[RMDB]
RNA sequence: GGGAACGACUCGAGUAGAGUCGAAAAUGUUGAUGACCCUGUGGUUGAUUGGCAUUAUUUUGAUGCACAGCCCUUGACCAGGAAGGUACAACAGCUUUUCUAUACAGAGGACAUGGCCUCAAGAUUUAAACCCGAUAGUUCGCUAUCGGGAAAAGAAACAACAACAACAAC
Reactivity to DMS in 0.01 (KOAc 150mM, MgCl2 10mM, bicine 150mM(pH8.5), 24C), signal-to-noise 5, nucleotides 027 to 129: u000g020u030u010g030a120u040g040a000c060c000c080u040g040u000g010g000u010u020g020a110u020u040g000g000c060a090u000u000a010u040u050u030u040g030a060u030g010c000a080c080a090g000c020c020c020u000u000g030a050c170c090a000g000g000a040a010g000g000u060a060c000a090a050c120a060g000c030u000u000u000u000c070u030a040u000a040c120a090g010a030g000g000a090c080a140u030g020g010c010c040u040c040a060a070g020a100u000u000u000a070a070a110
Reactivity to 2A3 in 0.01 (KOAc 150mM, MgCl2 10mM, bicine 150mM(pH8.5), 24C), signal-to-noise 8, nucleotides 027 to 129: u090g020u030u070g040a170u050g030a050c000c020c030u070g040u060g050g010u010u010g070a190u010u070g050g000c020a010u000u070a120u070u210u090u170g050a020u050g000c010a010c020a170g020c010c000c000u050u070g030a020c010c000a000g010g080a050a020g040g000u050a060c040a040a020c010a080g020c010u030u050u030u000c010u000a090u020a120c080a050g040a010g040g000a010c040a180u090g060g020c000c000u010c010a040a010g030a020u070u160u160a070a080a020
This 170-nucleotide RNA was probed chemically with DMS and 2A3. It was measured as part of the RMDB library 15KLIB. The RNA was probed in 150 mM KOAc, 10 mM MgCl2 and 150 mM bicine (pH 8.5) at 24 C.